[RMDB]
Structure probing data (2A3 and DMS) for a 207-nucleotide construct. The reactions ran in a buffer of 150 mM KOAc, 10 mM MgCl2 and 150 mM bicine (pH 8.5), at 24 C. The 2A3 profile rests on 1,829 reads.
RNA sequence: GGGAACGACUCGAGUAGAGUCGAAAAUCGCAAAACCGCGGCAAGUGGAGUUAGCGAGAGGAGGCUGGGUUUUGGCUUCCUUAAGCAAUCGGUCACCGAGAAGGUGUGGUCGUUACCGUGGAAUUCCGUGACAAAAUAACGUUCGCGUUAUUUUGAAGAUGUUUGCGUAAUUCGUUACGCAAACAUCAAAAGAAACAACAACAACAAC
Reactivity to 2A3 in 0.01 (KOAc 150mM, MgCl2 10mM, bicine 150mM(pH8.5), 24C), signal-to-noise 3, nucleotides 027 to 156: u100c020g010c020a000a010a010a030c020c000g000c000g000g010c050a110a080g070u130g100g050a100g050u150u110a010g000c000g020a010g000a000g040g000a000g020g000c030u100g070g180g190u100u070u300u270g050g010c000u000u000c010c010u000u010a020a020g010c000a000a030u070c010g020g000u020c000a000c020c030g030a060g140a250a100g100g050u110g000u020g050g020u000c040g000u030u030a040c020c000g000u010g030g000a020a030u070u010c040c020g030u090g040a030c020a000a000a000a000u000a000a000c000g020u060u050c190g000c000g080u030u010a000u000u010u000u000g020a050a010
Reactivity to DMS in 0.01 (KOAc 150mM, MgCl2 10mM, bicine 150mM(pH8.5), 24C), signal-to-noise 1, nucleotides 027 to 156: u000c060g000c080a050a050a030a230c000c010g060c040g050g030c040a030a230g030u000g030g010a100g010u000u000a170g020c000g000a300g000a040g000g010a020g020g090c010u000g080g040g020u010u010u020u000g030g010c010u000u000c010c030u000u010a000a300g030c020a090a030u020c000g030g000u000c000a100c020c000g000a260g000a150a140g010g000u000g040u000g020g020u000c020g000u020u000a050c010c010g000u000g000g010a040a290u000u010c010c030g000u000g040a250c010a020a020a020a000u000a010a010c090g010u000u010c290g000c080g040u000u000a020u000u020u000u000g010a030a060